[RMDB]
RNA sequence: GGGAACGACUCGAGUAGAGUCGAAAAGCGUUCGGUGCCGAGGGCGAGGAUUUCGACCCCGUGCUGCACGAAGCGGUGCAACACGAGGGCGACGGCGGGCAGGGGUCCAAGCCGGUAAUCGGCACCGCUGACUUGGUGCCUUCGGGCACCAAGUCAGAAAAGAAACAACAACAACAAC
Reactivity to 2A3 in 0.01 (KOAc 150mM, MgCl2 10mM, bicine 150mM(pH8.5), 24C), signal-to-noise 1, nucleotides 027 to 126: g000c090g040u050u000c080g010g010u000g030c040c010g000a000g010g000g010c000g000a020g000g000a100u060u120u070c210g070a300c000c000c000c000g000u020g000c000u000g000c000a000c060g100a280a000g050c150g090g060u000g070c010a000a000c000a000c000g000a300g030g000g000c000g000a050c000g040g090c260g070g000g000c140a170g000g030g020g060u000c000c010a020a000g020c030c030g000g020u020a040a110u000c000g000g080c000a000c000c000g000